Notes
An RNA of 177 nucleotides, treated with 2A3 and DMS and read out base by base. The 2A3 profile rests on 1,154 reads. The reactions ran in a buffer of 150 mM KOAc, 10 mM MgCl2 and 150 mM bicine (pH 8.5), at 24 C.
RNA sequence: GGGAACGACUCGAGUAGAGUCGAAAACUGCAGAAGGCACUUGCCGCCGAGGCCGAGAAGGCAGGCCUUCGAGAAGAGAAUCGUCUGCGGCGCAAACGCGUCGGCCUCUGCCUGCCUGCCGGAGGCGAUUAGGGGUCACGUUCGCGUGACCCCUAAUAAAAGAAACAACAACAACAAC
Reactivity to 2A3 in 0.01 (KOAc 150mM, MgCl2 10mM, bicine 150mM(pH8.5), 24C), signal-to-noise 2, nucleotides 027 to 126: c010u030g020c010a030g030a140a030g030g030c020a060c300u050u180g040c010c000g010c020c000g020a010g060g000c010c000g060a060g080a210a040g040g050c030a040g000g030c000c000u060u030c020g040a090g050a110a080g110a000g040a000a030u050c010g050u000c030u010g080c020g030g040c010g000c020a180a140a010c060g060c010g010u050c000g010g010c000c000u000c030u040g070c000c000u110g000c040c040u040g000c000c000g000g070a010g000g020c050g000
Reactivity to DMS in 0.01 (KOAc 150mM, MgCl2 10mM, bicine 150mM(pH8.5), 24C), signal-to-noise 2, nucleotides 027 to 126: c040u000g020c030a270g000a050a030g000g000c000a050c090u020u020g030c050c030g030c300c080g000a030g000g000c000c040g030a130g000a130a140g000g020c040a020g000g000c000c100u000u010c090g000a230g040a110a140g010a070g020a000a060u070c110g000u000c010u000g010c000g000g000c000g020c070a040a070a130c290g000c070g000u000c020g010g000c000c000u000c020u000g010c030c080u000g010c000c070u000g010c010c000g030g010a120g010g010c000g000